Background:
Structure probing data (DMS and 2A3) for a 177-nucleotide construct. The RNA was probed in 150 mM KOAc, 10 mM MgCl2 and 150 mM bicine (pH 8.5) at 24 C. For 2A3, 5,195 sequencing reads were counted. 2A3 adducts were read by reverse transcription with SuperScript II with manganese.

[RMDB]
RNA sequence: GGGAACGACUCGAGUAGAGUCGAAAAGAUAUGGAGAAUCGCUCAUGAGCGAAGAACUCGGAAACGAGGGAGCUCUGAGCGAGUUCUCCUAAGUCAAAAGGGAACUAUAGUUCGCUAUAGUUCCCAACUAUGUGUUUGAGUUCGCUCAAACACAUAGAAAAGAAACAACAACAACAAC
Reactivity to DMS in 0.01 (KOAc 150mM, MgCl2 10mM, bicine 150mM(pH8.5), 24C), signal-to-noise 4, nucleotides 027 to 126: g010a050u000a300u010g000g000a010g010a040a060u000c000g010c000u000c000a020u020g010a010g010c010g020a100a140g000a110a130c010u000c000g000g010a130a130a170c010g000a010g010g000g000a110g010c000u000c000u000g000a010g000c000g010a010g010u000u000c010u000c000c010u000a010a080g010u000c030a060a080a120a140g010g010g000a020a010c000u000a000u000a010g010u010u010c250g020c000u000a000u000a000g000u000u000c000c000c010a010a030
Reactivity to 2A3 in 0.01 (KOAc 150mM, MgCl2 10mM, bicine 150mM(pH8.5), 24C), signal-to-noise 3, nucleotides 027 to 126: g010a040u110a050u170g020g000a010g000a010a010u030c000g010c000u000c030a090u300g000a000g000c040g090a300a170g020a030a020c000u000c000g000g000a060a080a050c000g020a010g000g020g030a010g010c020u000c020u020g010a000g000c000g010a000g000u010u000c000u000c000c000u010a040a010g040u010c020a000a010a110a120g000g000g000a000a000c000u000a000u010a010g010u050u120c300g030c180u000a000u010a000g000u000u000c010c000c000a000a000